[RMDB]
RNA sequence: GGGAACGACUCGAGUAGAGUCGAAAAAAAAAAAGAUAUGGAGUGGAUGAUGAGGCACGCUCCCCACCAUGAUCGGAAACGAUCAUGAGGCGUGAACUACCUUAAGUCCACUCCUAAGUCAAAAAAACCAAAGUAUACGGUUCGCCGUAUACUUUGGAAAAGAAACAACAACAACAAC
Reactivity to 2A3 in 0.01 (KOAc 150mM, MgCl2 10mM, bicine 150mM(pH8.5), 24C), signal-to-noise 1, nucleotides 027 to 126: a000a000a000a000a000a070a150g190a050u260a060u260g010g000a060g000u030g010g000a020u050g010a170u300g040a030g000g030c020a020c020g010c000u170c130c030c000c000a010c000c020a010u030g010a000u010c000g010g000a080a000a030c010g010a000u010c010a010u000g010a000g010g010c010g030u030g020a040a060c080u190a100c040c010u000u000a050a020g000u010c000c010a010c000u000c000c020u000a000a000g000u020c030a150a110a010a050a050a050a110
Reactivity to DMS in 0.01 (KOAc 150mM, MgCl2 10mM, bicine 150mM(pH8.5), 24C), signal-to-noise 1, nucleotides 027 to 126: a000a000a080a190a100a080a060g010a030u060a300u000g000g000a020g060u000g000g000a060u000g060a190u000g020a000g020g010c020a020c080g000c000u000c080c000c020c100a300c110c000a000u000g000a000u020c000g000g000a100a100a080c000g000a050u000c040a000u000g020a020g040g000c080g040u030g020a050a010c110u000a300c010c050u000u000a070a300g000u000c000c000a000c000u000c000c000u000a000a090g000u000c010a020a000a020a070a140a160a080
Structure probing data (2A3 and DMS) for a 177-nucleotide construct. The data come from the RNA Mapping Database (RMDB), library TTRDES. Conditions: 150 mM KOAc, 10 mM MgCl2 and 150 mM bicine (pH 8.5), 24 C. For 2A3 the reverse transcriptase was SuperScript II with manganese.